[RMDB]
RNA sequence: GGGAACGACUCGAGUAGAGUCGAAAAAGGGAACUCAAUUUGAAUCCUCAUUGUUUGCUGAGCUGGCUAAACUAAUUGGAGCCGAAAGGAUUCGUACAACCGCAUAUCACCCUCAGUCAAAUGGCAACGCAUAUGGGAUGUUCGCAUCCCAUAUGCGAAAAGAAACAACAACAACAAC
Reactivity to 2A3 in 0.01 (KOAc 150mM, MgCl2 10mM, bicine 150mM(pH8.5), 24C), signal-to-noise 3, nucleotides 027 to 126: a000g110g000g020a180a070c110u090c070a090a120u170u090u120g000a000a000u010c000c000u040c050a070u000u050g000u060u050u010g050c040u000g010a010g040c030u030g010g000c010u040a000a000a200c040u040a000a170u160u210g060g040a000g030c030c000g040a060a030a030g010g000a030u020u030c010g000u050a080c030a050a120c030c000g020c030a040u010a020u170c020a040c030c000c000u000c000a020g050u050c000a000a090a070u120g040g000c020a050a030
Reactivity to DMS in 0.01 (KOAc 150mM, MgCl2 10mM, bicine 150mM(pH8.5), 24C), signal-to-noise 2, nucleotides 027 to 126: a120g000g020g050a060a090c120u000c100a060a060u000u000u000g010a040a010u000c000c010u050c100a120u010u030g000u000u000u000g050c050u000g010a110g050c090u000g000g070c010u080a090a030a160c080u000a070a050u040u040g000g020a070g000c000c020g000a030a100a110g000g000a040u000u030c010g000u010a080c160a030a120c060c080g040c090a090u020a080u000c080a050c050c010c000u050c030a100g000u020c030a060a030a080u010g000g010c240a110a120